Chemical mapping of a 207-nucleotide RNA with DMS and 2A3. For 2A3 the reverse transcriptase was SuperScript II with manganese. Values are in units of 0.01, from 0 to 300, in steps of 10. It was measured as part of the RMDB library M2RFPK.
RNA sequence: GGGAACGACUCGAGUAGAGUCGAAAAGUCGGAACAUAACGACGCCGGGCCGGUGGGGAAUCAGGGGGCUACCGUGGGAUAGCGAUGAGACAGCCCCUCCGAUGGCACCAAGCGUCGGAUCGCGGAAAACACUGUAAGCCCUUCGGGGCUUACAGAAAGAACAAUUAAUGUUCGCAUUAAUUGUUCUAAAAGAAACAACAACAACAAC
Reactivity to DMS in 0.01 (KOAc 150mM, MgCl2 10mM, bicine 150mM(pH8.5), 24C), signal-to-noise 1, nucleotides 027 to 156: g020u000c020g000g040a120a150c060a080u020a130a060c000g010a000c000g010c000c060g000g030g010c030c060g000g030u010g020g000g060g000a190a100u000c040a090g030g030g030g000g000c000u010a020c020c000g020u040g020g010g030a080u000a040g000c060g040a140u010g030a220g000a060c040a090g000c000c000c000c010u000c010c030g010a060u040g030g050c020a130c030c000a060a110g000c010g020u000c020g010g010a000u020c020g000c000g030g000a180a060a050a080c050a130c000u000g000u000a020a020g020c000c010c000u020u010c300g020g020g040g010c000u000u000a000c010a030g000a040a080
Reactivity to 2A3 in 0.01 (KOAc 150mM, MgCl2 10mM, bicine 150mM(pH8.5), 24C), signal-to-noise 3, nucleotides 027 to 156: g070u040c030g030g030a120a110c030a180u240a090a010c020g010a000c000g020c010c030g000g000g040c020c040g070g010u160g020g030g010g050a030a050u090c050a110g040g020g000g070g050c030u090a050c010c030g050u140g020g090g010a060u090a080g020c020g040a060u040g040a060g010a060c000a030g020c010c010c000c000u000c010c010g060a060u080g050g000c030a060c050c020a050a000g000c000g030u030c010g000g000a040u080c060g000c050g110g020a030a040a040a030c060a010c010u000g000u000a000a000g000c010c000c000u000u030c120g020g000g000g000c000u000u000a000c000a000g010a000a000
Notes
Conditions: 150 mM KOAc, 10 mM MgCl2 and 150 mM bicine (pH 8.5), 24 C.